RNA sequence: GGGAACGACUCGAGUAGAGUCGAAAAAGAGGCGAUGAUGGGAUAGAGCUUGUCGUUGGUGAGGACCUUCUCCAUCCUCGUCUUCUCCACAUUGAGCAUCUUCCCCCAGAGGGGAAGGAUGGCCUGGGGCUCUUAGAUUUUUCGAAAUCUAAGAGCCAAAAGAAACAACAACAACAAC
Reactivity to DMS in 0.01 (KOAc 150mM, MgCl2 10mM, bicine 150mM(pH8.5), 24C), signal-to-noise 2, nucleotides 027 to 126: a080g010a010g010g000c020g010a010u000g010a030u000g000g000g000a030u000a030g000a090g010c090u000u000g010u010c030g020u020u020g010g020u010g020a040g010g010a110c060c050u010u000c030u010c000c010a020u000c010c050u010c020g010u000c010u000u000c040u010c000c020a110c160a150u000u000g010a130g010c010a050u000c010u000u000c000c000c000c000c250a180g000a210g040g010g000g000a000a010g010g000a030u010g010g010c020c040u000g000g020
Reactivity to 2A3 in 0.01 (KOAc 150mM, MgCl2 10mM, bicine 150mM(pH8.5), 24C), signal-to-noise 2, nucleotides 027 to 126: a000g010a010g000g010c020g010a010u000g000a000u010g040g010g000a030u090a160g040a010g010c030u040u060g080u050c090g200u170u300g030g080u110g070a020g020g070a110c000c000u030u050c050u020c010c010a000u000c000c000u000c000g010u000c000u040u000c000u000c010c010a090c030a070u070u120g020a040g050c010a010u010c020u020u020c000c000c000c000c000a030g130a160g140g000g010g000a020a000g020g020a000u040g050g090c010c010u130g090g000